[RMDB]
RNA sequence: GGGAACGACUCGAGUAGAGUCGAAAAACAUAUUACGAUAUGAUUCAGAUGGUGUCUUAGUGGUUCGUACCAAGGGACAUAAUGGUUUCUUGUUUCCAACCAAAGAACAAGUGGCGAGCCUGAAUAAAAAACUGACUGCCGUUCGCGGCAGUCAGAACCAUCUAGAGCAGUUCGCUGCUCUAGAUGGAAAAGAAACAACAACAACAAC
Reactivity to 2A3 in 0.01 (KOAc 150mM, MgCl2 10mM, bicine 150mM(pH8.5), 24C), signal-to-noise 3, nucleotides 027 to 156: a000c040a040u170a030u070u200a080c080g050a040u050a020u180g080a070u070u180c070a070g070a220u120g040g040u050g030u010c030u080u060a140g020u050g070g020u070u080c050g030u080a050c010c000a030a060g010g010g010a010c000a020u220a110a140u140g080g000u010u010u000c010u010u020g030u030u020u010c010c020a050a080c010c000a080a020a000g020a020a020c010a060a030g020u020g070g040c040g010a010g040c020c010u040g050a060a030u130a130a060a020a020a020a030c000u000g000a000c000u000g000c020c000g010u020u030c240g000c000g080g030c000a000g020u000c000a000g010a000a000